Structure probing data (2A3 and DMS) for a 177-nucleotide construct. Conditions: 150 mM KOAc, 10 mM MgCl2 and 150 mM bicine (pH 8.5), 24 C. Values are in units of 0.01, from 0 to 300, in steps of 10. DMS adducts were read by reverse transcription with MarathonRT. For 2A3, 1,451 sequencing reads were counted. For DMS, 2,438 sequencing reads were counted.

RNA sequence: GGGAACGACUCGAGUAGAGUCGAAAAGCUAGUACUUUGCGCUCAUAUCCCUUCACGAGCUGUUUGUUCUUACAUGCAGGUACGCUUCCACUCAUUUAAGGGACCUGACAGCAGAAGAGGCAAAGAGACUCCGCUUGUUAUUCGUAACAAGCGGAGUAAAAGAAACAACAACAACAAC
Reactivity to 2A3 in 0.01 (KOAc 150mM, MgCl2 10mM, bicine 150mM(pH8.5), 24C), signal-to-noise 2, nucleotides 027 to 126: g050c050u100a030g060u010a150c010u040u010u060g010c220g110c040u010c030a080u060a040u150c000c000c000u010u070c040a100c070g040a010g000c000u010g000u000u030u000g010u020u010c000u010u000a020c000a000u000g000c050a020g000g130u090a130c030g010c050u090u030c020c000a080c020u050c020a070u000u000u130a020a090g000g020g000a000c040c010u010g090a040c000a000g000c000a010g020a140a050g000a030g010g070c030a050a000a000g090a000g020
Reactivity to DMS in 0.01 (KOAc 150mM, MgCl2 10mM, bicine 150mM(pH8.5), 24C), signal-to-noise 2, nucleotides 027 to 126: g040c100u040a130g050u000a070c020u000u000u000g010c000g000c000u000c030a140u030a040u020c010c010c000u010u030c030a190c060g010a090g010c010u000g000u010u010u000g000u030u010c050u000u030a090c120a000u000g000c080a010g000g000u010a120c110g000c040u010u010c000c030a080c040u000c000a030u020u030u010a110a030g000g000g020a010c060c040u000g000a010c020a010g000c020a230g000a020a010g000a060g000g020c080a070a040a030g000a220g000